[RMDB]
RNA sequence: GGGAACGACUCGAGUAGAGUCGAAAACACCUCUUCAAGAGGCCCCCUGGACCUUCACGAGCAAAAGGAUAUACCAGGAGGUAUGCACUUAGGGCCAGAGGGGCCUCUGCUCUGAGGCAGGGCCAGGGAGACAGACAAGGUUCGCCUUGUCUGUCUCAAAAGAAACAACAACAACAAC
Reactivity to DMS in 0.01 (KOAc 150mM, MgCl2 10mM, bicine 150mM(pH8.5), 24C), signal-to-noise 2, nucleotides 027 to 126: c110a150c030c000u000c010u000u000c120a080a020g010a030g000g000c000c000c000c000c010u000g020g000a030c000c000u000u010c180a140c270g000a100g000c150a050a100a020a020g000g020a170u000a030u000a010c000c000a240g010g020a180g020g020u000a010u000g000c300a080c010u000u000a030g010g000g020c010c010a000g000a140g020g000g010g010c000c000u000c000u000g000c140u000c170u010g000a020g010g010c070a080g050g000g000c040c040a140g000g010